[RMDB]
RNA sequence: GGGAACGACUCGAGUAGAGUCGAAAAUACAGCUUCUCGUUGAUCUCGUUCGCCACGCCGUCCUCUUCGCCGCCGACGACGCCGAUCUCGAUUUCCAGAAUGAUCUUGGCGGCCGCCGCCGCCUUGAGCGUGGUUCAGGAUUCGUCCUGAACCACGCAAAAGAAACAACAACAACAAC
Reactivity to 2A3 in 0.01 (KOAc 150mM, MgCl2 10mM, bicine 150mM(pH8.5), 24C), signal-to-noise 2, nucleotides 027 to 126: u150a010c050a000g030c040u020u060c010u010c010g070u050u150g020a070u000c070u040c100g090u060u080c030g030c070c010a080c110g030c030c000g030u070c020c000u000c000u000u050c010g000c000c020g060c070c070g010a020c040g020a010c000g030c000c000g050a090u020c060u030c040g160a180u000u040u010c000c020a030g060a110a180u150g010a120u040c020u010u020g020g000c000g000g040c000c000g100c070c110g010c000c000g000c010c030u000u010g010a000